[RMDB]
RNA sequence: GGGAACGACUCGAGUAGAGUCGAAAAGAUAUGGACACACCAAAGCUAGAAGGUAGUGGCGAUGAAAUUCUUCGGAAACGAAGAAUGGAGCCACGAACUUCUUGGACCUUUGGUGUGUCCUAAGUCAGAGAUAAGCCUAGUUCGCUAGGCUUAUCUCAAAAGAAACAACAACAACAAC
Reactivity to DMS in 0.01 (KOAc 150mM, MgCl2 10mM, bicine 150mM(pH8.5), 24C), signal-to-noise 2, nucleotides 027 to 126: g020a070u010a300u000g000g000a010c000a000c000a000c000c010a000a010a010g040c060u010a000g000a030a020g000g000u000a240g030u000g000g020c000g020a100u010g000a110a150a020u000u000c000u000u000c000g000g000a080a090a230c030g010a000a010g000a050a000u010g000g010a070g060c000c030a000c000g000a060a300c000u000u000c010u000u000g060g000a090c300c000u000u000u000g010g010u000g040u010g000u000c000c000u000a000a050g010u020c090a170